[RMDB]
RNA sequence: GGGAACGACUCGAGUAGAGUCGAAAAGACGAAGAUAGCGAAAGCUAGAAAAGAUCCGUGGCUAAACAGGAAACUGAAGAGAGCUGCUCGGCUGAGAAGCCCUGCCACGGAAGCAGCUCAAAGAGAACAUAGGCUAUCGGUUCGCCGAUAGCCUAUGAAAAGAAACAACAACAACAAC
Reactivity to DMS in 0.01 (KOAc 150mM, MgCl2 10mM, bicine 150mM(pH8.5), 24C), signal-to-noise 4, nucleotides 027 to 126: g010a140c180g020a180a130g020a230u000a010g010c010g000a130a090a190g010c010u000a030g010a160a090a160a140g010a100u000c000c010g020u010g000g010c060u000a050a110a120c210a080g010g000a080a140a150c150u030g010a100a100g010a150g010a000g050c000u000g020c010u000c180g030g000c010u040g000a140g000a160a010g000c000c000c170u020g000c010c000a010c010g000g000a040a010g000c000a010g000c010u000c010a130a060a050g000a160g010a100a160
Reactivity to 2A3 in 0.01 (KOAc 150mM, MgCl2 10mM, bicine 150mM(pH8.5), 24C), signal-to-noise 5, nucleotides 027 to 126: g070a020c090g050a060a030g070a150u060a020g010c020g060a130a090a000g000c000u010a000g110a000a170a010a000g050a030u000c000c000g000u000g020g000c030u100a060a100a090c040a050g030g150a080a070a070c100u150g090a160a010g170a050g000a010g100c010u000g000c010u020c060g030g000c000u010g000a010g010a070a000g000c000c010c020u070g000c000c000a000c000g000g000a000a000g000c000a000g000c000u000c000a020a050a010g110a010g000a090a000

An RNA of 177 nucleotides, treated with DMS and 2A3 and read out base by base.
The reactions ran in a buffer of 150 mM KOAc, 10 mM MgCl2 and 150 mM bicine (pH 8.5), at 24 C.